[RMDB]
RNA sequence: GGGAACGACUCGAGUAGAGUCGAAAAAUAAUAGAACUGCCGUCGCUGGCCAUAAAGAGGUGCAAGUAGUGCUUAUCUACAUAGAAUUUAGUGAGAGAUCCAGCGGUCACGGGCCAGGCACUCUCCACGUGUAAAACAGGUUCGCCUGUUUUACACGAAAAGAAACAACAACAACAAC
Reactivity to 2A3 in 0.01 (KOAc 150mM, MgCl2 10mM, bicine 150mM(pH8.5), 24C), signal-to-noise 1, nucleotides 027 to 126: a000u090a000a040u020a010g080a130a020c000u010g020c020c000g020u010c010g000c060u030g000g050c000c010a080u220a110a110a020g090a070g000g000u020g040c060a110a080g070u070a010g010u080g040c060u060u120a050u000c030u050a090c000a090u180a090g210a180a060u220u170u050a080g010u070g060a040g030a000g020a060u040c000c010a030g020c000g080g000u080c060a030c060g020g010g010c050c030a010g000g000c030a000c010u000c000u000c000c020a030
Reactivity to DMS in 0.01 (KOAc 150mM, MgCl2 10mM, bicine 150mM(pH8.5), 24C), signal-to-noise 2, nucleotides 027 to 126: a130u020a090a110u010a100g000a130a080c050u000g000c020c020g050u010c020g060c050u010g000g000c090c030a080u010a040a130a100g030a070g020g010u000g000c110a110a090g010u000a070g020u000g000c120u000u000a040u000c010u000a010c060a060u000a170g000a070a050u010u010u000a080g000u000g000a190g030a070g020a070u010c010c020a070g020c030g000g030u010c150a030c140g000g010g030c040c020a090g020g010c090a020c090u000c010u000c050c070a200